Structure probing data (2A3 and DMS) for a 207-nucleotide construct. 2A3 adducts were read by reverse transcription with SuperScript II with manganese.
RNA sequence: GGGAACGACUCGAGUAGAGUCGAAAAACAGAGUGAGACCCAGUUUCAAUAACAAUAACAAAGUGUUUAUUGUAUAAAUGAACAAAAACACAGCUCAUACUGAAUGUGGUGGGCAACAUUAAUACAGAUGAAAACAUUUGGUUUGUUUGCAUACCUAUGCGUAAGUAUUGUUCGCAAUACUUACGCAAAAAGAAACAACAACAACAAC
Reactivity to 2A3 in 0.01 (KOAc 150mM, MgCl2 10mM, bicine 150mM(pH8.5), 24C), signal-to-noise 2, nucleotides 027 to 156: a000c030a000g060a010g100u070g020a060g020a030c020c000c040a000g020u010u080u070c020a030a010u130a070a000c020a040a030u080a040a050c060a080a190a120g030u050g000u050u040u010a130u030u010g020u030a080u130a170a020a120u110g030a020a000c010a020a090a000a040a000c000a000c020a050g040c010u000c030a050u130a210c040u020g070a080a120u120g040u010g050g020u020g000g000g040c000a030a020c000a020u050u130a050a020u150a150c030a000g070a010u060g060a090a110a120a000c040a030u040u010u020g050g000u010u050u020g060u030u070u090g040c040a040u000a020c000c020u010a060
Reactivity to DMS in 0.01 (KOAc 150mM, MgCl2 10mM, bicine 150mM(pH8.5), 24C), signal-to-noise 2, nucleotides 027 to 156: a110c030a070g000a300g010u000g000a060g000a040c000c000c010a090g020u010u000u000c000a060a130u000a170a040c000a010a020u000a060a060c020a140a080a240g040u000g010u000u000u000a070u000u000g000u000a130u000a050a130a180u020g000a010a010c050a030a080a070a000a030c040a080c070a110g040c000u010c010a040u000a250c050u020g020a110a070u000g000u020g020g050u000g010g020g040c030a050a060c020a060u000u000a120a070u000a130c040a030g000a070u000g000a120a070a100a100c040a050u000u000u000g000g000u000u000u000g010u000u000u010g000c000a040u000a090c020c010u000a180

Source information
For DMS the reverse transcriptase was MarathonRT. As a SHAPE reagent, 2A3 marks flexible, mostly unpaired nucleotides at the ribose 2'-OH. For DMS, 2,918 sequencing reads were counted.